[RMDB]
RNA sequence: GGGAACGACUCGAGUAGAGUCGAAAAGGGGUUUCACCAUAUUGGACCAGGCUGGUCUCAAACUCCUGACCUCAGGUGAUCCAAUUGCCUCGGCCCCCUAAUGUGCUGGGAUUACAGGCAUGAGCCACCGUCCAUAAAGGUUCGCCUUUAUGGACGGAAAAGAAACAACAACAACAAC
Reactivity to 2A3 in 0.01 (KOAc 150mM, MgCl2 10mM, bicine 150mM(pH8.5), 24C), signal-to-noise 1, nucleotides 027 to 126: g050g050g000g010u080u170u060c050a030c010c070a000u060a110u250u220g010g000a060c040c020a000g060g110c070u090g030g040u060c030u000c090a070a080a030c070u070c030c050u100g050a100c000c010u050c030a030g000g000u000g030a040u070c040c000a050a220u110u060g000c000c030u070c050g060g040c000c000c000c010c030u070a000a180u210g000u080g100c010u060g000g000g000a050u130u060a060c030a040g000g030c020a020u070g030a030g000c010c000a050
Reactivity to DMS in 0.01 (KOAc 150mM, MgCl2 10mM, bicine 150mM(pH8.5), 24C), signal-to-noise 2, nucleotides 027 to 126: g000g000g010g010u000u000u000c100a090c090c090a050u020a070u000u000g000g000a090c040c020a070g000g030c100u000g000g000u000c030u000c130a030a120a050c070u000c040c010u020g000a090c040c030u010c110a050g020g030u000g000a040u000c050c050a050a130u010u000g010c010c020u010c070g020g010c040c030c010c040c010u000a070a060u010g020u010g010c050u000g010g000g010a090u000u010a090c060a000g010g020c000a030u010g010a080g010c040c040a150
Overview: Source: RMDB library OK2TRN, as collected in RNAgym. The record gives the reactivity of an RNA of 177 nucleotides to 2A3 and DMS. For DMS the reverse transcriptase was MarathonRT. The RNA was probed in 150 mM KOAc, 10 mM MgCl2 and 150 mM bicine (pH 8.5) at 24 C. 2A3 is a SHAPE reagent: it acylates the 2'-hydroxyl of flexible nucleotides of all four kinds.